Notes:
Chemical mapping of a 177-nucleotide RNA with DMS and 2A3. Values cover nucleotides 27 to 126.
[RMDB]
RNA sequence: GGGAACGACUCGAGUAGAGUCGAAAAUAGAUCCAUGCUGUCCUAGUCUUUUGACUAGGCUCUUUGAUGUCGAUCUGCUCCAAGACAUCUGAGCGACAGCCGCGGAGCAGAUUUUGGAUCUAGAAAAGGGUGUCAGCAUGUUCGCAUGCUGGUACCCAAAAGAAACAACAACAACAAC
Reactivity to DMS in 0.01 (KOAc 150mM, MgCl2 10mM, bicine 150mM(pH8.5), 24C), signal-to-noise 9, nucleotides 027 to 126: u010a000g000a000u000c000c000a040u020g010c150u010g000u030c010c000u000a000g000u000c000u030u030u030u060g010a010c000u000a000g000g000c040u010c030u010u010u020g010a100u010g020u030c140g000a050u000c020u000g000c010u000c010c010a090a300g000a050c070a200u020c040u020g010a110g020c190g000a070c110a110g010c070c090g000c300g010g000a020g000c000a020g000a030u000u000u010u010g000g000a010u000c000u000a020g000a040a070a100a120
Reactivity to 2A3 in 0.01 (KOAc 150mM, MgCl2 10mM, bicine 150mM(pH8.5), 24C), signal-to-noise 9, nucleotides 027 to 126: u040a000g000a000u000c000c010a030u080g020c040u070g060u170c000c000u000a000g000u000c020u030u300u130u300g000a000c000u000a000g000g000c000u000c000u010u040u100g100a090u100g070u130c050g010a010u000c000u010g000c000u000c010c010a050a020g030a030c020a070u060c040u070g060a050g090c070g070a070c040a030g020c010c020g030c050g010g000a000g000c010a000g000a000u040u030u010u030g000g000a000u000c000u000a010g080a010a110a010a030

For DMS, 52,269 sequencing reads were counted. 2A3 is a SHAPE reagent: it acylates the 2'-hydroxyl of flexible nucleotides of all four kinds.